[RMDB]
RNA sequence: GGGAACGACUCGAGUAGAGUCGAAAAGCAGUUGACUUCGGUCAACUGCAAAUAAAGCUCAAGACGUGCACAGGGAGGAACGUCUUGAGCAACCCAAUAAUAAAACAUGUAAGUUCGCUUACAUGAAGCACUGCCUAUCGUUCGCGAUAGGCAGUGCAAAAGAAACAACAACAACAAC
Reactivity to 2A3 in 0.01 (KOAc 150mM, MgCl2 10mM, bicine 150mM(pH8.5), 24C), signal-to-noise 1, nucleotides 027 to 126: g030c010a010g000u000u000g020a010c020u040u050c170g080g000u000c000a000a000c000u020g000c010a010a010a000u000a000a000a000g000c000u000c000a000a020g000a000c000g020u030g040c030a060c110a290g110g100g070a140g040g040a040a000c000g010u000c000u000u010g000a010g000c000a010a000c000c000c020a000a010u150a030a010u060a000a070a020a020c010a010u010g010u000a000a020g010u000u110c230g020c050u000u000a000c000a000u010g000a000a000